[RMDB]
RNA sequence: GGGAACGACUCGAGUAGAGUCGAAAAGCACCAGUUCGCUGGUGCAAAAACCGUAGGCGACGAAGAACGAUCACGAGUAUGAUCCUUCGAAAGAGGGAUGUAAUACGAUGAGUGAUCGGGAGUCGCCUAAACGGAAAAACCAACCUUCGGGUUGGAAUCCGUACUUACUGUUCGCAGUAAGUACGGAAAAAGAAACAACAACAACAAC
Reactivity to DMS in 0.01 (KOAc 150mM, MgCl2 10mM, bicine 150mM(pH8.5), 24C), signal-to-noise 1, nucleotides 027 to 156: g090c000a030c000c020a020g010u000u000c280g070c010u000g000g040u000g030c000a000a020a060a050a130c010c000g000u010a030g030g000c010g000a050c020g000a060a100g000a130a300c000g000a030u000c010a030c000g000a240g010u000a050u030g010a060u000c010c000u010u000c000g000a070a200a300g010a070g000g020g000a020u000g110u010a120a080u000a030c010g000a150u000g020a300g040u020g000a020u000c000g040g010g000a200g010u000c000g040c000c010u000a000a010a070c040g020g000a030a060a010a000a160c000c000a010a020c020c010u000u000c260g080g040g010u000u000g000g000a010a030
Reactivity to 2A3 in 0.01 (KOAc 150mM, MgCl2 10mM, bicine 150mM(pH8.5), 24C), signal-to-noise 2, nucleotides 027 to 156: g000c000a000c000c000a000g010u080u060c200g060c090u000g000g000u000g010c000a030a000a000a020a000c000c000g000u020a000g000g000c000g010a000c020g060a190a040g020a070a030c010g010a020u000c000a000c020g030a050g000u000a010u030g050a010u030c000c000u000u000c000g050a070a060a040g000a000g000g020g000a000u020g040u070a050a000u010a010c070g090a190u300g120a110g030u030g000a000u000c000g000g000g000a030g000u000c010g000c000c000u000a000a000a000c000g000g010a060a030a060a020a020c020c000a010a000c000c010u050u070c270g090g010g000u000u000g000g000a020a020
Description:
This 207-nucleotide RNA was probed chemically with DMS and 2A3. The reactions ran in a buffer of 150 mM KOAc, 10 mM MgCl2 and 150 mM bicine (pH 8.5), at 24 C. The data come from the RNA Mapping Database (RMDB), library RNAMAK.